[RMDB]
RNA sequence: GGGAACGACUCGAGUAGAGUCGAAAAAGACGGAAACCCAUCGACUGUUACCAGAUGCUGCAUCACCUGAUCACUGAUGGCUCAACGGUAUCCGGCGGUACAACUGAAUACUUGUAGCUGCCUUUUGAAAAGGAGUUCAUCUUCGGAUGAACUCCAAGACAUAUCGGACGUUCGCGUCCGAUAUGUCAAAAGAAACAACAACAACAAC
Reactivity to 2A3 in 0.01 (KOAc 150mM, MgCl2 10mM, bicine 150mM(pH8.5), 24C), signal-to-noise 2, nucleotides 027 to 156: a000g040a020c120g020g040a040a110a040c000c000c010a040u050c040g110a090c010u050g000u050u060a020c000c010a040g000a090u010g030c070u060g010c050a000u010c030a040c030c030u090g030a060u050c040a020c070u030g040a050u040g070g000c020u020c060a130a060c040g030g010u040a060u050c070c050g030g000c020g030g010u010a000c000a030a010c070u180g060a090a100u100a170c040u050u050g000u050a040g080c010u010g040c020c000u130u070u050u080g110a090a080a020a040g000g010a000g000u020u000c000a000u000c010u020u060c130g140g010a000u000g000a000a010c000u020c000c000a000a010